[RMDB]
RNA sequence: GGGAACGACUCGAGUAGAGUCGAAAAUGAUUGCUCUUCGGAGCAAUCACACUACCGAGGUUGUUGCUCGGUAUAAAGAACAAACCCUUGGAAACAAGGGAAGAAGAAAACGAUUCGUCGUUUUCAACCAUCAUGUUGUGUUCGCACAACAUGAUGGAAAAGAAACAACAACAACAAC
Reactivity to DMS in 0.01 (KOAc 150mM, MgCl2 10mM, bicine 150mM(pH8.5), 24C), signal-to-noise 2, nucleotides 027 to 126: u000g000a020u000u000g020c020u000c000u000u010c160g000g010a010g010c000a010a000u010c000a020c120a110c130u020a020c000c000g000a030g010g000u020u010g010u000u000g000c010u000c000g020g000u010a000u000a010a030a050g000a080a110c070a090a120a170c000c000c000u020u000g000g000a140a130a220c000a020a000g000g000g000a030a020g020a110a140g000a010a020a000a000c010g000a070u000u000c140g000u000c000g040u000u020u000u000c000a130a140
This 177-nucleotide RNA was probed chemically with DMS. Source: RMDB library M2PK50, as collected in RNAgym. The DMS profile rests on 1,332 reads.